[RMDB]
The record gives the reactivity of an RNA of 207 nucleotides to 2A3. The 2A3 profile rests on 444 reads.
RNA sequence: GGGAACGACUCGAGUAGAGUCGAAAAAAGUGAUUUGCUCAAGAUUGGUUAUCAGUAGAGUUGGGGUUUGAAUUCCAUUCUUCUGGAUUCAAAUCUAAGCUCUCCCUCUGCACAGUUACAUGUGGGCAGGCUGUGCAUGCAUAUCUGUGGCCUGGAGCCCACUCCCUGUUUUCGAACAGGGAGUGGGAAAAGAAACAACAACAACAAC
Reactivity to 2A3 in 0.01 (KOAc 150mM, MgCl2 10mM, bicine 150mM(pH8.5), 24C), signal-to-noise 1, nucleotides 027 to 156: a000a050g090u080g050a190u170u060u150g030c090u080c080a040a030g040a160u040u150g050g000u090u050a140u300c020a020g040u060a010g010a020g030u250u020g020g000g000g020u000u000u000g000a000a000u240u130c020c000a040u200u020c050u230u080c120u030g000g000a000u000u000c010a000a000a000u010c020u000a020a020g020c000u000c000u000c000c000c000u000c040u020g000c000a020c000a030g000u000u140a080c080a080u100g020u110g110g000g060c000a030g000g000c020u000g000u040g000c000a010u020g020c000a050u080a130u250c040u010g040u040g050g000c000c020u010g040g010a010g080
The data come from the RNA Mapping Database (RMDB), library OK3TST. The reactions ran in a buffer of 150 mM KOAc, 10 mM MgCl2 and 150 mM bicine (pH 8.5), at 24 C.